[RMDB]
RNA sequence: GGGAACGACUCGAGUAGAGUCGAAAAGGCUCGAAGUUCGCUUCGAGCCAAAUAAAUUCAGCGGUAAUUCCUCCGCAAAUAUUACCGCUGAUGCGGAGGAAUAAACAACCGUGUUCGCACGGUUGAAUCCAAAUACUAACUUCGGUUAGUAUUUGGAAAAAGAAACAACAACAACAAC
Reactivity to DMS in 0.01 (KOAc 150mM, MgCl2 10mM, bicine 150mM(pH8.5), 24C), signal-to-noise 4, nucleotides 027 to 126: g020g010c000u000c000g000a030a010g010u000u010c240g010c010u000u010c000g000a030g000c000c010a000a020a020u000a040a100a130u000u010c050a030g020c040g000g010u000a110a070u000u000c010c010u000c010c010g020c040a040a050a100u000a100u000u000a100c040c030g040c050u000g010a050u000g010c020g000g010a030g000g000a070a020u000a070a080a220c010a010a010c000c000g040u000g010u000u010c180g020c000a010c000g000g000u000u010g010a060a120
Reactivity to 2A3 in 0.01 (KOAc 150mM, MgCl2 10mM, bicine 150mM(pH8.5), 24C), signal-to-noise 3, nucleotides 027 to 126: g000g020c010u000c000g000a000a000g010u060u090c150g050c130u010u000c000g010a000g000c000c000a000a000a000u000a000a000a020u150u080c040a010g020c030g070g030u060a050a060u020u000c010c010u000c010c000g000c030a030a030a010u160a040u080u080a080c010c010g030c040u030g040a040u070g000c010g010g010a010g000g020a010a040u070a040a060a020c020a000a000c000c010g000u010g020u020u050c260g010c030a000c000g000g010u000u010g040a020a030

This 177-nucleotide RNA was probed chemically with DMS and 2A3. Source: RMDB library M2PK50, as collected in RNAgym. The 2A3 profile rests on 5,765 reads. Values cover nucleotides 27 to 126. The RNA was probed in 150 mM KOAc, 10 mM MgCl2 and 150 mM bicine (pH 8.5) at 24 C.